The record gives the reactivity of an RNA of 177 nucleotides to 2A3 and DMS. High DMS reactivity at an A or C suggests that its Watson-Crick edge is free. DMS adducts were read by reverse transcription with MarathonRT. The RNA was probed in 150 mM KOAc, 10 mM MgCl2 and 150 mM bicine (pH 8.5) at 24 C. For 2A3, 7,642 sequencing reads were counted.
RNA sequence: GGGAACGACUCGAGUAGAGUCGAAAAGAUAUGGAAACAGGUUGCCUGCACUCGUCGUUGAAAUCGGAAACGAUGGAGACGACUGCAUAAGCUGUUUCCUAAGUCAAAACUCGCGUUCGCGCGAGAAUCAUAUGUGGUUGUUCGCAACCACAUAUGAAAAAGAAACAACAACAACAAC
Reactivity to 2A3 in 0.01 (KOAc 150mM, MgCl2 10mM, bicine 150mM(pH8.5), 24C), signal-to-noise 3, nucleotides 027 to 126: g010a040u080a020u160g000g000a000a000a000c000a010g250g190u270u070g060c040c050u030g000c030a030c070u230c100g000u000c000g090u100u030g030a040a040a000u000c010g010g010a050a050a040c010g000a010u010g000g020a030g000a010c000g010a000c010u010g000c000a010u020a070a010g080c000u000g000u000u000u010c000c000u010a080a020g030u010c020a000a020a110a180c010u000c000g000c010g020u040u070c290g010c010g000c010g110a010g020a000a100
Reactivity to DMS in 0.01 (KOAc 150mM, MgCl2 10mM, bicine 150mM(pH8.5), 24C), signal-to-noise 5, nucleotides 027 to 126: g000a020u000a300u020g000g000a000a000a010c000a000g010g000u010u000g010c280c240u010g010c000a040c270u010c120g020u000c000g010u010u030g010a160a140a010u000c000g010g010a090a070a170c010g020a010u000g020g010a300g010a010c000g000a010c020u010g000c010a010u000a130a050g010c000u000g000u000u000u000c000c000u000a020a100g010u010c040a100a050a110a160c000u000c000g020c000g030u000u030c250g020c010g000c000g000a010g000a050a080